The record gives the reactivity of an RNA of 177 nucleotides to DMS and 2A3. The 2A3 profile rests on 9,397 reads. The RNA was probed in 150 mM KOAc, 10 mM MgCl2 and 150 mM bicine (pH 8.5) at 24 C. The data come from the RNA Mapping Database (RMDB), library OK2TST.
RNA sequence: GGGAACGACUCGAGUAGAGUCGAAAACAGACUUCAAGUGGAAUUGCUGCUCCGGGAGCUCCGAGAUCGAGAAUCGCAAUGCCCACCACAAGCUCCUCAUCACUGGCUCGCCGUCCCGGCUCGGCGAGUAUAUCCCUAGGUUCGCCUAGGGAUAUACAAAAGAAACAACAACAACAAC
Reactivity to DMS in 0.01 (KOAc 150mM, MgCl2 10mM, bicine 150mM(pH8.5), 24C), signal-to-noise 9, nucleotides 027 to 126: c100a130g010a110c060u000u000c110a100a120g020u000g010g010a260a070u000u000g010c040u000g010c040u000c030c030g000g000g010a090g010c040u010c100c050g000a110g010a060u000c060g010a100g000a100a090u000c090g000c040a050a060u000g010c090c000c010a070c030c050a080c130a060a080g000c040u000c020c020u000c090a060u000c100a090c140u010g010g010c040u000c010g010c010c010g010u000c020c010c010g000g000c080u000c010g000g010c020g000a050
Reactivity to 2A3 in 0.01 (KOAc 150mM, MgCl2 10mM, bicine 150mM(pH8.5), 24C), signal-to-noise 6, nucleotides 027 to 126: c020a030g120a090c020u090u060c110a120a090g030u040g060g040a060a080u060u050g010c030u020g010c010u030c020c010g040g000g020a040g030c030u050c070c090g090a070g040a120u130c070g050a030g100a240a070u090c030g000c020a020a020u080g030c020c000c010a020c010c020a050c030a050a020g000c020u040c010c020u030c020a100u060c010a040c070u050g080g000c010u020c010g010c010c000g020u030c020c000c010g040g010c020u010c010g010g000c000g000a000